[RMDB]
RNA sequence: GGGAACGACUCGAGUAGAGUCGAAAAGUGCUGACCGUCCGAUCGUCCCCUACGGCGGUGACCGGCAAGGGCAUCGUUGAGUCGACGACCAAGACGAAGCGGGAUCGUCACGUACCAGUGCCUGAGCGUACUGAUUUACUUUCGAGUAAAUCAGUACAAAAGAAACAACAACAACAAC
Reactivity to 2A3 in 0.01 (KOAc 150mM, MgCl2 10mM, bicine 150mM(pH8.5), 24C), signal-to-noise 8, nucleotides 027 to 126: g060u050g030c030u030g040a040c030c030g030u050c020c010g040a110u050c050g060u040c030c020c010c010u130a100c030g010g000c020g010g010u020g030a100c020c010g060g100c120a100a120g060g000g010c000a020u030c030g050u020u070g030a040g060u050c040g050a050c040g010a020c020c030a040a020g050a040c070g060a060a040g290c070g050g030g000a120u050c010g010u020c020a010c090g010u020a040c010c030a040g020u020g080c010c010u050g020a040g030c070
Reactivity to DMS in 0.01 (KOAc 150mM, MgCl2 10mM, bicine 150mM(pH8.5), 24C), signal-to-noise 9, nucleotides 027 to 126: g020u000g020c060u010g010a070c060c030g010u010c020c040g000a140u000c070g010u000c000c010c010c030u010a150c110g000g000c010g010g020u000g000a070c070c020g010g020c200a100a170g010g000g020c030a030u000c040g020u000u010g010a100g010u000c100g020a040c030g000a060c040c030a080a110g000a070c070g000a090a080g000c070g020g010g000a080u000c160g000u000c020a070c110g000u000a070c050c040a110g010u000g010c020c020u000g000a200g020c150